The record gives the reactivity of an RNA of 207 nucleotides to 2A3 and DMS. Reactivities are given for positions 27 through 156. The DMS profile rests on 4,514 reads. The data come from the RNA Mapping Database (RMDB), library OK3TST. The RNA was probed in 150 mM KOAc, 10 mM MgCl2 and 150 mM bicine (pH 8.5) at 24 C. For 2A3, 1,642 sequencing reads were counted.

RNA sequence: GGGAACGACUCGAGUAGAGUCGAAAAUUCUGUGUGCUUUAGACACUGCACUAGGCUCAGAGAUUUAAAAUGUAUUCAGUGUAGCUGGAGGAAGAUUUGUUGGUGAAUUGCUGCUGUUCCUUUGGGACUAAGAGCUUUUAACCUUUUAGAAACGGAACGAAAAUGGAUGAUUCGUCAUCCAUUUUCGAAAAGAAACAACAACAACAAC
Reactivity to 2A3 in 0.01 (KOAc 150mM, MgCl2 10mM, bicine 150mM(pH8.5), 24C), signal-to-noise 3, nucleotides 027 to 156: u080u000c050u020g060u000g000u020g070c030u180u100u060a050g030a070c050a040c110u090g000c030a020c040u040a050g010g000c000u010c060a040g010a010g010a070u060u160u300a120a110a090a080u140g020u110a090u070u070c050a040g030u010g020u080a040g030c030u020g010g000a010g010g020a050a030g030a080u050u060u130g070u030u060g030g010u040g020a050a040u030u030g000c010u010g020c030u040g020u040u000c000c000u030u060u120g020g000g000a020c000u030a050a000g000a010g050c000u100u020u030u070a040a050c010c000u030u040u030u090a040g020a020a110a010c040g020g040a060a020
Reactivity to DMS in 0.01 (KOAc 150mM, MgCl2 10mM, bicine 150mM(pH8.5), 24C), signal-to-noise 2, nucleotides 027 to 156: u000u000c030u000g010u010g030u010g020c030u020u000u010a080g010a100c040a090c070u000g000c050a150c030u010a080g040g000c040u000c020a100g010a140g010a110u000u000u010a060a100a080a080u000g030u000a120u000u010c040a080g050u010g020u000a090g010c030u010g010g010a100g000g010a070a080g020a100u000u000u020g020u000u000g020g030u000g000a080a090u000u000g000c000u000g030c000u010g000u000u000c000c020u000u010u000g030g040g010a300c030u020a020a030g010a050g020c060u010u010u000u010a070a120c180c000u010u000u000u010a040g010a040a160a300c070g000g010a070a280
DMS adducts were read by reverse transcription with MarathonRT.